[RMDB]
RNA sequence: GGGAACGACUCGAGUAGAGUCGAAAAGAUAUGGAAAUCCACGACAUGGUCGGUGUCGGAAACGACACUCGACCAACAGCGUGAUUUCCUAAGUCAAAAGACAAUGACAAGUUCGCUUGUCAUUGUCCCAUGUGACAUUCUUCGGAAUGUCACAUGGAAAAGAAACAACAACAACAAC
Reactivity to 2A3 in 0.01 (KOAc 150mM, MgCl2 10mM, bicine 150mM(pH8.5), 24C), signal-to-noise 5, nucleotides 027 to 126: g000a000u020a020u060g000g030a030a010a010u120c300c070a060c020g120a090c130a300u300g000g000u000c020g000g000u010g000u000c000g000g000a050a010a000c000g000a000c000a010c040u110c030g010a000c010c010a020a010c010a000g000c000g000u020g010a000u000u000u000c000c000u000a020a000g020u000c000a060a030a040a170g020a010c000a010a000u010g000a000c000a010a000g030u050u160c280g110c230u000u010g000u000c000a010u000u000g000u010c000
Reactivity to DMS in 0.01 (KOAc 150mM, MgCl2 10mM, bicine 150mM(pH8.5), 24C), signal-to-noise 5, nucleotides 027 to 126: g000a020u000a170u010g000g010a020a020a010u000c160c090a000c000g020a090c140a200u010g040g040u000c010g010g020u000g000u000c000g010g010a030a030a090c000g020a000c000a000c000u010c030g010a010c010c010a030a030c190a160g010c000g000u010g000a060u000u000u000c000c000u010a010a100g000u000c010a100a100a120a180g010a030c000a000a010u000g000a000c000a010a000g010u000u020c300g020c000u000u000g010u000c000a000u000u000g000u000c010